[RMDB]
RNA sequence: GGGAACGACUCGAGUAGAGUCGAAAAGGAUCCUCUCACAGGAUUGUCUCUGUGUUCCGAAACUCCAACAGUAUUGCUUCGGGACAGCUACAGCAAUACUGUAGUUAUAGAGAGUAGGAGAGGAUCGGACUACCUAAUCAUUCGUGAUUAGGUAGUCAAAAGAAACAACAACAACAAC
Reactivity to DMS in 0.01 (KOAc 150mM, MgCl2 10mM, bicine 150mM(pH8.5), 24C), signal-to-noise 7, nucleotides 027 to 126: g010g000a010u000c000c000u000c010u010c010a140c080a150g010g000a150u010u010g010u000c020u010c010u000g020u000g000u000u000c000c010g010a040a050a070c020u010c160c130a100a110c160a100g000u000a210u010u010g000c050u010u000c060g010g010g010a040c050a040g010c050u000a030c060a010g010c050a080a070u010a300c000u000g010u000a010g010u000u010a080u010a040g000a050g000a050g020u010a120g000g000a030g000a020g020g000a000u000c000g010
Reactivity to 2A3 in 0.01 (KOAc 150mM, MgCl2 10mM, bicine 150mM(pH8.5), 24C), signal-to-noise 7, nucleotides 027 to 126: g090g000a000u010c010c010u010c010u000c010a200c050a080g120g130a260u160u230g140u020c010u000c000u030g050u000g020u050u020c000c000g020a050a020a020c040u100c080c030a100a080c030a180g110u160a160u140u180g020c020u020u040c010g010g000g060a050c020a020g000c020u020a010c010a010g030c070a080a130u060a300c010u000g010u000a000g000u010u050a070u190a040g040a000g010a010g070u090a070g000g090a000g000a010g000g000a000u000c000g000
Structure probing data (DMS and 2A3) for a 177-nucleotide construct.
2A3 adducts were read by reverse transcription with SuperScript II with manganese.
DMS (dimethyl sulfate) methylates the pairing face of unpaired adenines and cytosines.